[RMDB]
RNA sequence: GGGAACGACUCGAGUAGAGUCGAAAAGGCGGGAUGGGCUCCAGUCACCGGCUCGGUGGGCGACCGUCCCUUCCCAUGAGUCCACACGGUAAGCGCCUCUGGCCCGAGGCCGCUCGUCGGGAAUCGGCAGUUAUAGUUCGUUCGCGAACUAUAACUGAAAAGAAACAACAACAACAAC
Reactivity to 2A3 in 0.01 (KOAc 150mM, MgCl2 10mM, bicine 150mM(pH8.5), 24C), signal-to-noise 1, nucleotides 027 to 126: g060g020c060g030g000g010a050u030g030g000g000c080u030c050c060a050g110u120c010a010c050c030g130g170c150u160c190g000g020u020g010g070g040c030g020a020c000c000g030u010c000c010c000u010u010c020c000c000a010u070g020a020g070u000c020c000a060c000a000c130g000g110u150a130a040g020c000g010c020c020u020c010u150g170g000c000c030c010g010a000g040g000c060c020g000c000u020c030g040u000c030g000g010g030a010a070u090c030g050g000
Reactivity to DMS in 0.01 (KOAc 150mM, MgCl2 10mM, bicine 150mM(pH8.5), 24C), signal-to-noise 2, nucleotides 027 to 126: g010g000c200g000g000g000a050u000g010g000g000c020u010c040c050a170g010u010c050a050c020c040g010g010c150u020c070g040g030u000g010g000g020c080g010a060c000c020g010u000c000c010c010u000u000c000c000c000a090u010g000a050g000u000c000c020a110c060a300c030g000g020u000a090a090g000c050g010c010c000u000c020u010g010g030c100c090c080g010a020g000g000c050c050g010c030u000c040g010u010c150g020g000g010a050a060u000c060g020g010
About this RNA:
This 177-nucleotide RNA was probed chemically with 2A3 and DMS. As a SHAPE reagent, 2A3 marks flexible, mostly unpaired nucleotides at the ribose 2'-OH. Values cover nucleotides 27 to 126. For DMS the reverse transcriptase was MarathonRT. The DMS profile rests on 1,840 reads. For 2A3, 1,598 sequencing reads were counted.